An RNA of 177 nucleotides, treated with DMS and 2A3 and read out base by base. High 2A3 reactivity points to a flexible backbone, as in loops and unpaired stretches. Conditions: 150 mM KOAc, 10 mM MgCl2 and 150 mM bicine (pH 8.5), 24 C. The data come from the RNA Mapping Database (RMDB), library M2PK50.

[RMDB]
RNA sequence: GGGAACGACUCGAGUAGAGUCGAAAAUCGACUUCCUUCGGGAAGUCGAAAAUAACGGUCGGCUCAUGUAGCUAGUCGAACAUGCUGCUCGACCUAGACUAAAAAGAAUCUCGUUCGCGAGAUUCAAGUGAAAGUUUAGGUUCGCCUAAACUUUCACAAAAGAAACAACAACAACAAC
Reactivity to DMS in 0.01 (KOAc 150mM, MgCl2 10mM, bicine 150mM(pH8.5), 24C), signal-to-noise 1, nucleotides 027 to 126: u000c000g000a000c000u000u000c010c010u030u010c200g000g040g000a000a010g000u030c000g000a010a000a110a070u020a090a100c240g000g020u000c010g000g020c000u010c030a010u020g000u000a210g000c060u010a060g000u010c110g000a050a070c010a050u000g000c190u000g010c010u020c000g000a030c000c000u000a030g010a170c080u000a040a030a110a090a070g000a050a010u020c000u010c000g030u030u000c130g000c020g000a020g000a000u000u000c010a050a030
Reactivity to 2A3 in 0.01 (KOAc 150mM, MgCl2 10mM, bicine 150mM(pH8.5), 24C), signal-to-noise 1, nucleotides 027 to 126: u010c010g000a000c000u020u010c010c000u020u020c120g050g010g010a000a000g000u010c000g000a000a000a000a010u040a020a020c030g000g000u000c000g020g000c010u010c020a000u010g000u010a010g040c090u040a080g300u270c020g000a030a030c000a010u030g010c020u040g000c070u110c150g000a000c010c000u000a030g030a040c010u050a030a080a010a030a080g000a010a000u000c000u000c000g030u020u120c210g000c010g050a000g020a030u010u000c000a040a010